[RMDB]
RNA sequence: GGGAACGACUCGAGUAGAGUCGAAAAAGACCGAGCUCGGAUAUACGUAUCCGAGCUCGGUCAUAUUGCACAUUACUAAGUUGCAUGUUGUCACGGCCUCAAUGCAAUUUAGUGUGUGUGAUAUUAAUCAUAUAAGAUCUUUCGAGAUCUUAUAUGAAAAAGAAACAACAACAACAAC
Reactivity to 2A3 in 0.01 (KOAc 150mM, MgCl2 10mM, bicine 150mM(pH8.5), 24C), signal-to-noise 6, nucleotides 027 to 126: a000g020a000c000c000g000a010g000c010u000c000g050g010a000u020a000u010a020c250g050u020a000u010c000c000g000a000g000c000u000c000g000g000u000c000a000u000a000u000u000g010c010a000c000a010u100u230a080c010u000a000a010g010u000u000g010c010a000u020g050u040u040g080u120c090a070c220g210g030c020c020u040c040a110a080u010g010c000a000a000u000u000u010a000g000u000g000u000g000u000g000u000g000a000u000a000u010u170a050a070
Reactivity to DMS in 0.01 (KOAc 150mM, MgCl2 10mM, bicine 150mM(pH8.5), 24C), signal-to-noise 4, nucleotides 027 to 126: a080g010a010c000c010g020a020g020c010u020c010g010g030a030u000a030u020a080c200g020u000a010u010c000c020g010a020g030c010u000c000g010g010u000c000a000u000a000u000u000g000c010a010c000a010u010u050a010c000u000a000a010g000u000u000g010c000a010u000g000u000u010g000u000c060a130c280g020g000c020c030u010c040a110a020u000g000c000a000a000u000u000u000a000g010u000g010u000g000u000g010u000g010a000u000a010u010u010a100a140